An RNA of 207 nucleotides, treated with 2A3 and DMS and read out base by base. For DMS the reverse transcriptase was MarathonRT. The 2A3 profile rests on 2,969 reads. Values cover nucleotides 27 to 156. For 2A3 the reverse transcriptase was SuperScript II with manganese. For DMS, 2,669 sequencing reads were counted.
[RMDB]
RNA sequence: GGGAACGACUCGAGUAGAGUCGAAAACGCUGGGCGAUUGAGCUCUAAGGGAGGGAGGAUUGCAUUCUGAAGCGCGCACGGAAUGCAAUCCGACGAUCUCCUGAUGGAGCAAUGAUGUCGCCUGUGCUGAAGCGCGCACGGCAACCGAAAGGUGCGAGAAAAAGUACAUCUUCGGAUGUACUUUUUCAAAAGAAACAACAACAACAAC
Reactivity to 2A3 in 0.01 (KOAc 150mM, MgCl2 10mM, bicine 150mM(pH8.5), 24C), signal-to-noise 2, nucleotides 027 to 156: c090g000c010u050g020g010g020c000g000a000u010u030g050a020g000c010u030c010u010a010a040g010g000g010a000g040g000g020a010g010g000a010u000u000g010c000a000u000u030c000u040g060a190a090g010c000g000c000g000c000a010c050g010g000a000a010u000g000c020a000a000u000c000c000g010a000c000g000a000u000c010u020c000c000u020g020a100u300g020g000a000g000c000a010a260u040g010a010u010g010u000c000g010c020c010u010g010u030g000c020u120g050a070a040g020c020g010c000g000c010a000c000g080g000c030a110a190c010c000g050a090a050a010g010g020u010g000c020g030a160
Reactivity to DMS in 0.01 (KOAc 150mM, MgCl2 10mM, bicine 150mM(pH8.5), 24C), signal-to-noise 1, nucleotides 027 to 156: c110g040c030u010g020g030g030c000g040a040u000u010g010a030g020c000u020c010u000a150a300g010g000g000a030g000g020g010a060g050g030a060u000u030g010c000a010u000u000c000u010g000a050a210g010c040g010c000g020c030a210c000g020g000a030a020u000g010c040a010a000u010c000c000g000a050c110g000a040u000c000u010c000c020u000g010a080u010g020g010a000g000c040a100a080u030g000a080u020g000u000c000g020c010c010u010g020u000g030c020u010g000a140a140g000c020g050c010g010c010a020c020g020g060c080a110a080c000c050g010a080a190a160g020g020u000g000c080g000a280